[RMDB]
RNA sequence: GGGAACGACUCGAGUAGAGUCGAAAAUAUGACACCAUACUGCCAUGAUCCUACUGUUUUGCCUGGGGCUUUUGCGUACAGUCAGAUGAGGCCUCAUGUUCGUUACGACUUGUAUGAUGGUAACAUGCCUUAUUGUUUAGUUCGCUAAACAAUAAGGAAAAGAAACAACAACAACAAC
Reactivity to DMS in 0.01 (KOAc 150mM, MgCl2 10mM, bicine 150mM(pH8.5), 24C), signal-to-noise 9, nucleotides 027 to 126: u010a060u000g010a070c050a050c050c030a060u010a060c060u000g010c030c020a040u010g000a100u000c030c020u000a080c110u010g000u000u000u000u000g010c040c040u000g000g010g010g010c060u000u000u000u000g020c100g020u000a090c120a080g010u000c060a080g010a070u000g010a080g010g010c040c050u000c040a040u010g010u000u000c100g010u000u000a060c080g010a060c090u000u010g010u000a040u000g000a080u000g010g010u000a040a050c060a090u010g010
Reactivity to 2A3 in 0.01 (KOAc 150mM, MgCl2 10mM, bicine 150mM(pH8.5), 24C), signal-to-noise 9, nucleotides 027 to 126: u240a060u070g030a010c010a010c040c010a020u060a080c020u030g010c010c000a040u050g010a070u050c020c010u030a070c030u070g070u090u070u100u090g030c000c010u020g020g000g010g000c000u060u060u070u120g030c010g020u050a090c030a080g050u050c010a020g050a150u060g030a040g020g020c010c000u020c010a020u060g040u040u050c040g020u030u040a040c080g020a040c060u020u020g030u040a060u100g070a020u070g040g000u010a030a020c020a040u100g040

Source information:
An RNA of 177 nucleotides, treated with DMS and 2A3 and read out base by base. The data come from the RNA Mapping Database (RMDB), library 15KREP. For DMS the reverse transcriptase was MarathonRT. The DMS profile rests on 24,945 reads. Conditions: 150 mM KOAc, 10 mM MgCl2 and 150 mM bicine (pH 8.5), 24 C.